[RMDB]
RNA sequence: GGGAACGACUCGAGUAGAGUCGAAAAGGCCAUUGAUUCAUCUGAACCCUGACUUCAUGUCUGACUGCAAGGGUAGGAUCCAAGCUCAUUUGGAAAGAAACAAGACAGAAUCCAGUAUGGAUGAGGAAUCAGUUCUUAGUAAAGAUUUUUUAAAAACCACGUAGUCCUGGUUCGCCAGGACUACGUGAAAAGAAACAACAACAACAAC
Reactivity to 2A3 in 0.01 (KOAc 150mM, MgCl2 10mM, bicine 150mM(pH8.5), 24C), signal-to-noise 1, nucleotides 027 to 156: g000g070c030c030a030u020u050g050a000u130u030c020a020u080c080u030g070a180a160c000c010c000u010g060a080c030u050u030c190a150u120g020u020c030u030g060a200c060u080g110c030a110a020g040g010g000u020a000g000g040a020u040c010c010a060a000g020c000u020c070a100u000u020u060g000g040a000a050a050g090a040a090a010c040a050a020g120a020c040a060g120a090a010u000c040c010a030g030u040a120u060g080g020a020u020g020a020g020g020a040a030u020c000a010g030u140u000c010u090u160a140g010u150a020a070a040g000a090u080u100u090u040u060u150a020a130a070a000a000c030